[RMDB]
RNA sequence: GGGAACGACUCGAGUAGAGUCGAAAAUUUUAUCAUUUCACAAGCGAUCAUCGCAUUUCUGGUUGGAAAGAGACCAAUGCCAUGUACGUCGCACUCAAUAGUCAGUUUUCUGCAUUAGAAGUUUUGUUUCAAGGUCCAUACCCAUACGAUGUUCCAGGAUUACAUUUCUGUUCGCAGAAAUGUAAUCAAAAGAAACAACAACAACAAC
Reactivity to 2A3 in 0.01 (KOAc 150mM, MgCl2 10mM, bicine 150mM(pH8.5), 24C), signal-to-noise 4, nucleotides 027 to 156: u060u060u080u100a130u110c040a030u010u140u110c090a060c030a130a050g010c010g020a020u090c000a000u000c020g030c020a000u010u090u120c140u130g040g010u040u050g060g170a220a130a100g110a030g020a010c020c000a010a020u010g000c000c000a020u040g030u060a050c090g020u020c020g000c000a020c000u050c000a060a090u020a090g100u060c090a020g000u060u020u110u090c020u050g090c040a090u070u110a050g080a230a040g060u020u010u080u110g040u000u010u020c030a050a040g030g000u000c020c030a010u050a170c010c060c000a020u070a100c070g060a040u040g020u030u000c010c000a010g050
Reactivity to DMS in 0.01 (KOAc 150mM, MgCl2 10mM, bicine 150mM(pH8.5), 24C), signal-to-noise 2, nucleotides 027 to 156: u000u000u010u030a090u040c070a090u010u010u000c050a150c060a060a210g000c030g030a130u000c030a090u000c070g010c030a050u000u000u010c070u000g030g010u000u000g000g000a160a110a150g010a230g000a050c000c030a070a060u010g030c010c050a080u010g020u000a100c060g000u010c030g000c000a110c060u010c050a050a160u000a090g000u020c050a090g000u010u000u000u000c000u000g030c060a100u000u000a060g030a100a150g010u010u010u000u000g030u000u000u010c030a080a110g030g020u000c030c070a110u000a040c040c010c000a100u010a080c060g010a130u010g050u000u000c040c030a200g040